[RMDB]
RNA sequence: GGGAACGACUCGAGUAGAGUCGAAAACAGGCCCAAGUUGACUCUCUGGCUGCAGUUGUCCUCCAAAACUGCCAAGGCCUUGACUUACUCACUGCUGAAAAAGGAAGGCGCUGUGUGUAUGUGUGUGUCUAAGUGCCAUCUUCGGAUGGCACUUAGAAAAAGAAACAACAACAACAAC
Reactivity to DMS in 0.01 (KOAc 150mM, MgCl2 10mM, bicine 150mM(pH8.5), 24C), signal-to-noise 2, nucleotides 027 to 126: c170a150g000g010c000c040c030a140a090g020u010u000g010a110c080u000c050u010c020u020g000g000c030u000g010c020a030g030u000u010g000u000c040c030u020c040c050a060a070a040a050c040u020g010c030c220a090a060g000g000c020c040u010u000g020a100c030u000u000a070c080u000c060a050c070u000g030c060u010g010a030a080a090a110a130g000g030a080a050g030g020c050g030c030u000g010u010g020u010g010u000a060u040g030u010g000u010g040u000g040

This 177-nucleotide RNA was probed chemically with DMS. For DMS the reverse transcriptase was MarathonRT. Source: RMDB library OK2TST, as collected in RNAgym. For DMS, 1,282 sequencing reads were counted.